[RMDB]
RNA sequence: GGGAACGACUCGAGUAGAGUCGAAAAAAAAGAAAACAUCUCAGUUACCCGCACUGCCUUUUUUCUCUCCCGCUUUUCAGCAGAACGAGGCGACAAGCGAAGGAACAAAACAAAACAAAAGAAAACAACUAUUAUCAGUGUUCGCACUGAUAAUAGUAAAAGAAACAACAACAACAAC
Reactivity to DMS in 0.01 (KOAc 150mM, MgCl2 10mM, bicine 150mM(pH8.5), 24C), signal-to-noise 2, nucleotides 027 to 126: a050a000a070a140g000a060a070a040a060c160a060u000c040u010c040a090g000u000u000a090c020c000c000g020c060a090c050u000g040c030c000u000u000u000u000u000u030c080u000c050u000c050c010c010g000c090u020u020u010u010c070a030g030c010a060g010a020a070c220g010a030g020g010c000g020a030c130a100a120g000c070g000a120a030g000g000a020a030c090a080a010a070a010c100a070a020a050a060c130a100a050a060a050g020a080a060a050a050c100a060
Reactivity to 2A3 in 0.01 (KOAc 150mM, MgCl2 10mM, bicine 150mM(pH8.5), 24C), signal-to-noise 5, nucleotides 027 to 126: a000a000a000a000g200a030a060a000a030c100a090u090c080u020c040a060g010u040u040a140c000c000c040g000c020a030c040u050g000c010c000u030u030u000u010u060u020c030u010c000u020c020c030c020g010c030u080u040u050u140c110a050g000c010a020g020a110a040c060g070a090g060g000c010g010a010c030a060a030g000c020g070a080a040g040g040a030a040c060a020a110a000a010c060a000a070a040a010c060a030a140a010a020g170a030a120a020a020c070a040